[RMDB]
RNA sequence: GGGAACGACUCGAGUAGAGUCGAAAAGAUAUGGACCUCUCAGACAUGGUCGGUGUCGGAAACGACACCCGGACCAACAGCUGAGGAGGUCCUAAGUCAAACUAGUUCAAGUUCGCUUGAACUAGAAGCUAAUACUUUGCUUCGGCAAAGUAUUAGCAAAAGAAACAACAACAACAAC
Reactivity to 2A3 in 0.01 (KOAc 150mM, MgCl2 10mM, bicine 150mM(pH8.5), 24C), signal-to-noise 2, nucleotides 027 to 126: g000a010u040a010u060g010g010a010c020c010u020c000u020c000a030g030a160c140a300u300g000g000u000c010g010g040u030g010u010c010g000g000a010a000a000c000g000a020c000a000c000c000c020g210g040a000c040c010a100a130c140a050g000c000u020g030a070g040g080a020g070g000u010c000c010u000a000a000g010u010c000a020a060a170c010u010a020g000u000u000c010a010a000g020u030u120c220g040c100u000u010g000a000a000c010u000a000g010a030a010
Reactivity to DMS in 0.01 (KOAc 150mM, MgCl2 10mM, bicine 150mM(pH8.5), 24C), signal-to-noise 2, nucleotides 027 to 126: g000a020u000a040u010g000g000a000c010c000u000c000u000c000a010g000a020c080a300u020g020g040u000c020g000g000u000g000u000c010g010g000a010a010a050c010g020a000c000a000c020c020c300g050g020a000c000c000a070a090c200a170g010c020u000g000a020g010g000a010g020g020u000c000c000u000a000a060g000u010c000a230a100a300c020u000a000g010u000u000c000a020a010g020u000u020c220g010c010u010u000g000a040a010c000u000a000g000a140a110
This 177-nucleotide RNA was probed chemically with 2A3 and DMS.
The 2A3 profile rests on 3,564 reads.
The data come from the RNA Mapping Database (RMDB), library TTRDES.
2A3 adducts were read by reverse transcription with SuperScript II with manganese.
DMS adducts were read by reverse transcription with MarathonRT.